[RMDB]
An RNA of 177 nucleotides, treated with DMS and 2A3 and read out base by base.
Reactivities are given for positions 27 through 126.
RNA sequence: GGGAACGACUCGAGUAGAGUCGAAAAUGGAAGGUGUUCCAGGCAUACACUGAAAUGGAUUCCUGGUCAGGCGUUCUUAAAAGUCUUAUGUAUGCUGCCAUCGCAGGGGGUUGUGUUAUCGCGGCCGUCAUAACUAUGUCUUCGGACAUAGUUAUGAAAAAGAAACAACAACAACAAC
Reactivity to DMS in 0.01 (KOAc 150mM, MgCl2 10mM, bicine 150mM(pH8.5), 24C), signal-to-noise 6, nucleotides 027 to 126: u020g000g020a060a070g000g020u010g000u010u010c030c040a110g000g010c060a050u010a040c030a050c070u000g000a060a090a080u020g010g000a100u000u000c010c010u000g010g010u020c090a080g010g010c060g000u000u000c010u020u010a050a070a100a100g000u010c030u000u010a060u010g010u010a020u010g000c020u010g020c030c030a060u010c070g000c080a080g010g010g010g010g010u000u000g010u000g010u000u020a070u010c050g010c020g010g000c010c040g010
Reactivity to 2A3 in 0.01 (KOAc 150mM, MgCl2 10mM, bicine 150mM(pH8.5), 24C), signal-to-noise 5, nucleotides 027 to 126: u130g020g020a030a030g090g070u080g050u130u030c060c020a030g040g000c020a020u060a030c020a040c110u140g040a080a100a080u110g030g010a040u040u040c010c000u040g050g100u080c050a010g000g020c020g040u040u040c040u070u130a060a090a080a100g050u010c030u070u110a110u120g050u000a020u070g020c010u030g020c010c000a070u080c050g000c050a030g060g020g000g000g000u020u050g040u020g020u070u040a160u100c020g000c030g060g000c000c000g060

Notes: Source: RMDB library OK1LIB, as collected in RNAgym.